Overview:
Structure probing data (DMS) for a 177-nucleotide construct. The reactions ran in a buffer of 150 mM KOAc, 10 mM MgCl2 and 150 mM bicine (pH 8.5), at 24 C. It was measured as part of the RMDB library OK1LIB.
RNA sequence: GGGAACGACUCGAGUAGAGUCGAAAAGUGCAGAGUGAAAUUCAUAGGUGCUUCGCCAAUUUGGCGGAACGACCCGGUACUCCGCGUAGUCGCGACGUAAACGUUCAGUGUUGGCGUUCAGGCCUCAAGCUAUGACCCAUUUCGAUGGGUCAUAGCUAAAAGAAACAACAACAACAAC
Reactivity to DMS in 0.01 (KOAc 150mM, MgCl2 10mM, bicine 150mM(pH8.5), 24C), signal-to-noise 1, nucleotides 027 to 126: g060u010g000c030a000g000a030g020u010g010a100a070a050u000u010c100a100u020a040g000g000u010g000c170u010u000c000g040c000c000a170a150u000u030u000g030g040c000g000g000a050a060c100g040a030c020c000c060g000g040u000a090c020u000c000c010g000c010g040u020a010g000u000c030g040c100g000a120c110g000u000a050a010a140c020g060u010u000c070a160g040u010g000u000u080g000g000c100g080u000u010c140a070g080g000c000c000u070c010a160